[RMDB]
RNA sequence: GGGAACGACUCGAGUAGAGUCGAAAAGCUCUGGAAUUGAGGCCCCUCUAACAAUAAUCCAAAACUACUUCGCAGAGUAAUCUGCCGAAUCUUAGGAUGCCCAUUACUAUCUAUUUUUGGAGCAUCUAAAACUGUCAGUGCUUCGGCACUGACAGAACGAUUUCCCUAAGUUCGCUUAGGGAAAUCGAAAAGAAACAACAACAACAAC
Reactivity to 2A3 in 0.01 (KOAc 150mM, MgCl2 10mM, bicine 150mM(pH8.5), 24C), signal-to-noise 2, nucleotides 027 to 156: g000c010u010c020u090g010g080a140a050u100u050g010a010g060g010c020c000c010c010u090c100u050a100a190c020a050a060u200a050a050u100c000c000a030a020a070a060c070u150a100c010u010u060c020g000c020a010g020a010g010u160a100a180u010c000u000g040c050c020g010a010a030u010c050u100u110a030g010g010a000u000g010c000c000c000a000u020u000a040c040u080a100u110c040u130a240u130u070u010u010u030g010g000a130g020c010a010u000c000u050a000a020a070a040c000u000g000u010c000a000g010u000g000c000u000u070c130g080g000c000a000c000u000g000a000c000a000g000a010a000